Description: The record gives the reactivity of an RNA of 177 nucleotides to DMS. For DMS, 797 sequencing reads were counted. The RNA was probed in 150 mM KOAc, 10 mM MgCl2 and 150 mM bicine (pH 8.5) at 24 C.
RNA sequence: GGGAACGACUCGAGUAGAGUCGAAAAUGUACAGGAUAGGUGGGAGCCUUAGAAACGUGAGCGCCAGCUUACGUGGAGGCAUCCGUGGGAUACCACCCUGGCUGUAUGGACCUUCUAACCCAGGACCUCGGUGUCCGGUAUUCGUACCGGACACCGAAAAAGAAACAACAACAACAAC
Reactivity to DMS in 0.01 (KOAc 150mM, MgCl2 10mM, bicine 150mM(pH8.5), 24C), signal-to-noise 1, nucleotides 027 to 126: u010g020u000a010c010a000g000g000a110u030a080g010g010u000g000g020g000a140g030c000c010u010u000a100g000a100a070a030c000g000u000g040a020g010c020g000c240c300a100g020c010u000u000a000c010g030u000g050g030a030g020g040c030a070u000c030c020g020u000g010g000g010a150u000a150c000c000a030c010c000c000u010g010g000c030u000g010u000a000u000g010g000a120c040c040u010u010c150u060a110a120c140c010c040a050g000g000a120c040c020